Chemical mapping of a 177-nucleotide RNA with DMS and 2A3. DMS adducts were read by reverse transcription with MarathonRT.

RNA sequence: GGGAACGACUCGAGUAGAGUCGAAAACCCCUUCAGUUCGCUGAAGGGGAAAGGGUUCUCCCGCCCGCCGUGAACCCAGGGUAAAAGUUAAGGUAGGUGGGCAAACCCUACUCUUCGGAGUAGGGAAUCUAUCGGUAAAGUUCGCUUUACCGAUAGAAAAAGAAACAACAACAACAAC
Reactivity to DMS in 0.01 (KOAc 150mM, MgCl2 10mM, bicine 150mM(pH8.5), 24C), signal-to-noise 3, nucleotides 027 to 126: c000c000c000c010u000u000c000a020g010u010u010c210g020c010u000g010a000a010g030g000g000g020a010a010a060g000g000g010u000u000c020u000c020c070c040g030c010c000c000g020c030c010g010u000g010a030a040c000c010c010a180g020g010g010u010a040a080a090a100g000u000u000a120a100g020g010u000a090g020g000u020g000g010g000c030a050a060a100c000c000c000u000a010c010u000c000u000u010c140g010g000a020g000u000a000g000g010g000a020a010
Reactivity to 2A3 in 0.01 (KOAc 150mM, MgCl2 10mM, bicine 150mM(pH8.5), 24C), signal-to-noise 4, nucleotides 027 to 126: c000c000c000c000u000u010c000a040g010u020u120c150g020c080u000g010a000a010g010g000g000g010a050a080a020g000g000g000u010u010c000u030c020c010c030g000c000c000c010g000c000c000g010u020g020a010a000c010c000c040a040g180g060g040u100a060a050a040a070g100u140u160a090a040g110g080u090a020g020g010u070g000g000g000c000a000a000a040c000c000c000u010a000c000u010c010u020u070c240g130g000a000g000u000a000g020g000g010a000a010